[RMDB]
Chemical mapping of a 177-nucleotide RNA with DMS. Conditions: 150 mM KOAc, 10 mM MgCl2 and 150 mM bicine (pH 8.5), 24 C. For DMS the reverse transcriptase was MarathonRT.
RNA sequence: GGGAACGACUCGAGUAGAGUCGAAAACAUUGAUUCUUACCUCUUCCAAACUCGUCGCGGAAGCCCCUGCAAAUACGCGAAAAUAUUGAUCGAUGAAUGCUACAUGGUACAUGCUGGUAUCAUAAUCGAACCAGAAGGGAUUCGUCCCUUCUGGUUCAAAAGAAACAACAACAACAAC
Reactivity to DMS in 0.01 (KOAc 150mM, MgCl2 10mM, bicine 150mM(pH8.5), 24C), signal-to-noise 2, nucleotides 027 to 126: c110a060u000u000g000a070u010u000c080u000u010a070c090c030u020c020u010u000c030c020a080a240a070c090u010c120g000u000c020g020c300g010g000a080a070g000c110c000c020c000u000g010c130a080a090a040u000a060c120g000c020g000a040a010a070a050u000a060u000u000g020a070u030c020g000a010u010g000a060a050u000g000c050u000a070c140a000u000g040g000u000a030c020a070u020g040c150u010g020g020u000a020u010c020a010u000a060a040u020c200